An RNA of 177 nucleotides, treated with DMS and read out base by base. Source: RMDB library OK2TST, as collected in RNAgym. For DMS, 758 sequencing reads were counted. Reactivities are given for positions 27 through 126. The reactions ran in a buffer of 150 mM KOAc, 10 mM MgCl2 and 150 mM bicine (pH 8.5), at 24 C.
[RMDB]
RNA sequence: GGGAACGACUCGAGUAGAGUCGAAAAUCAAACAGUUUGCUAAUGGGUUUGUCGUCCGUAUAGGAGCAGCUGCCAAUUCCACUGGCACUGUUAUUAUUAGCCCAUCUACCAGCGCUACUAUACGAAACACGGACAAGAGGUUCGCCUCUUGUCCGUGAAAAGAAACAACAACAACAAC
Reactivity to DMS in 0.01 (KOAc 150mM, MgCl2 10mM, bicine 150mM(pH8.5), 24C), signal-to-noise 1, nucleotides 027 to 126: u020c070a070a060a060c020a040g020u000u000u000g010c070u010a050a020u010g100g000g010u010u000u000g040u000c110g010u000c070c000g060u000a040u000a030g020g010a060g000c080a070g010c090u000g010c180c030a040a090u000u000c060c050a110c130u010g050g010c000a100c010u000g010u010u000a080u000u020a070u020u000a100g010c010c020c090a080u000c130u000a080c270c030a010g030c070g010c010u000a010c100u000a020u020a010c040g000a130a130a130